Structure probing data (DMS and 2A3) for a 177-nucleotide construct.
[RMDB]
RNA sequence: GGGAACGACUCGAGUAGAGUCGAAAAGGCAGUCGGGCAGUGCCGGCAGGACAGAGGUGGGCUGACUCCUGCCCCCUCCCCACAUCUCCCCAGACACGGUUGGGGGCGACCCCAUGGGGCUCCCCUAAUGACAACUACGAUUCGUCGUAGUUGUCAUAAAAGAAACAACAACAACAAC
Reactivity to DMS in 0.01 (KOAc 150mM, MgCl2 10mM, bicine 150mM(pH8.5), 24C), signal-to-noise 3, nucleotides 027 to 126: g020g040c080a090g010u010c150g030g000g000c040a060g000u000g020c090c080g000g010c020a030g010g020a080c070a060g000a080g010g020u000g030g020g000c030u010g010a150c180u010c030c020u000g000c000c000c010c000c010u000c010c010c010c020a120c200a130u010c110u010c010c000c010c030a110g010a110c100a060c140g010g000u000u010g020g000g010g000g020c160g000a130c010c000c000c030a070u000g020g030g000g020c030u000c020c000c000c020u000a090
Reactivity to 2A3 in 0.01 (KOAc 150mM, MgCl2 10mM, bicine 150mM(pH8.5), 24C), signal-to-noise 1, nucleotides 027 to 126: g030g020c050a020g040u140c070g000g010g060c070a060g010u020g220c000c040g050g010c020a050g020g020a020c010a020g020a020g070g060u120g020g000g000c010u000g040a070c070u030c010c030u010g010c000c000c010c000c010u020c000c010c060c000a020c000a040u120c070u050c000c000c000c000a000g020a050c050a010c140g130g030u090u070g020g000g050g000g010c010g030a070c010c050c110c030a020u120g020g020g000g000c000u020c000c010c010c000u050a070

The DMS profile rests on 2,427 reads.